[RMDB]
RNA sequence: GGGAACGACUCGAGUAGAGUCGAAAAUGGACAUGAAGUGCAUCCAAUUUUGUUAUCACAUGUCAAACAAGACUCUUCACAUUUUUUACAGUCUCGUUUUCGAUAGGUGUAAUACCCAUCUUGACACUCUCCAAGUCUGUUUCGACAGACUUGGAGAAAAAGAAACAACAACAACAAC
Reactivity to DMS in 0.01 (KOAc 150mM, MgCl2 10mM, bicine 150mM(pH8.5), 24C), signal-to-noise 1, nucleotides 027 to 126: u000g000g000a060c000a040u000g000a070a030g000u000g010c010a190u000c270c110a110a050u000u050u070u020g030u000u030a020u060c100a010c030a000u060g020u000c000a000a000a000c140a030a100g000a020c020u000c070u000u010c220a070c300a010u000u060u000u000u000u000a110c190a020g000u020c090u030c170g030u000u000u000u000c120g000a000u000a000g020g030u000g040u000a100a020u000a060c000c010c020a070u000c050u000u000g000a230c060a040c290
Reactivity to 2A3 in 0.01 (KOAc 150mM, MgCl2 10mM, bicine 150mM(pH8.5), 24C), signal-to-noise 4, nucleotides 027 to 126: u030g020g010a010c030a060u110g060a130a040g090u030g000c000a050u000c020c030a090a110u050u060u020u120g060u030u050a090u220c020a010c000a020u070g000u000c000a000a010a030c030a060a040g020a010c010u000c040u140u170c050a120c130a300u010u050u020u070u120u240a160c090a010g020u000c000u010c010g030u030u000u100u060c060g010a000u020a070g220g000u020g000u070a090a060u070a060c000c000c000a040u030c090u060u100g010a020c030a020c030